[RMDB]
RNA sequence: GGGAACGACUCGAGUAGAGUCGAAAAUAAGUUAUGUUCGCAUAACUUAGUUUAACCUACUUGACUCAGCGGUUAGAGUAUCGCUUUCAUACGGCGAGAGUCAUUGGUUCAAAUCCAAUAGUAGGUACCAGUACGGGUCAUAAUUCGUUAUGACCAACUCACGGACACUGUUCGCAGUGUCCGUGAGAAAAGAAACAACAACAACAAC
Reactivity to 2A3 in 0.01 (KOAc 150mM, MgCl2 10mM, bicine 150mM(pH8.5), 24C), signal-to-noise 2, nucleotides 027 to 156: u030a010a000g000u010u000a010u020g030u010u060c240g000c120a000u000a000a000c000u000u000a050g010u000u130u050a020a000c000c000u000a000c010u060u070g030a010c010u010c010a010g030c100g040g040u140u140a040g000a060g080u120a120u100c070g030c070u040u100u160c080a120u110a130c030g140g020c000g030a080g030a020g090u020c010a050u000u060g000g010u000u100c040a020a040a050u060c000c000a000a030u020a060g020u000a010g010g000u010a080c010c060a040g030u090a080c160g050g050g000u030c020a000u030a040a050u090u090c150g080u110u020a010u000g010a000c000c000a000a070

Record summary
This 207-nucleotide RNA was probed chemically with 2A3. The 2A3 profile rests on 861 reads. 2A3 adducts were read by reverse transcription with SuperScript II with manganese. Values cover nucleotides 27 to 156.